Chemical mapping of a 177-nucleotide RNA with 2A3 and DMS. It was measured as part of the RMDB library RFM100. For DMS, 2,433 sequencing reads were counted.
[RMDB]
RNA sequence: GGGAACGACUCGAGUAGAGUCGAAAAACGGCCGCUUACGAGCGGCCGAGAGCGUCGUGUUGACACUCAAAAAGUUUCAGAUUUUGGAACAUUUCGGAUUUUGGAUUUUUGGAUCAGGGAUGCUCAAAUGAAAAACGGAUUUCGAUCCGUUUUUCAUAAAAGAAACAACAACAACAAC
Reactivity to 2A3 in 0.01 (KOAc 150mM, MgCl2 10mM, bicine 150mM(pH8.5), 24C), signal-to-noise 1, nucleotides 027 to 126: a000c000g000g040c000c000g020c020u000u060a030c210g070a050g030c000g000g000c000c010g000a000g000a000g000c010g000u030c050g030u030g080u200u160g050a020c030a040c100u110c020a000a030a060a030a090g080u030u040u080c080a090g010a270u060u080u130u230g040g030a150a080c110a220u000u110u040c050g070g000a050u010u110u080u170g100g010a110u020u040u010u110u150g010g050a020u030c010a010g000g000g060a000u010g000c010u020c070a060a130
Reactivity to DMS in 0.01 (KOAc 150mM, MgCl2 10mM, bicine 150mM(pH8.5), 24C), signal-to-noise 1, nucleotides 027 to 126: a200c030g010g000c020c000g020c000u000u000a110c180g000a130g040c010g000g000c060c020g010a010g010a000g000c050g010u010c000g000u030g000u040u000g010a040c120a050c060u060c070a070a010a080a070a070g010u000u000u010c020a040g020a130u000u020u020u060g010g000a050a090c110a130u040u010u000c040g010g000a030u010u000u010u000g000g020a160u020u010u000u000u040g000g000a100u000c030a080g000g000g010a040u000g000c010u000c000a090a060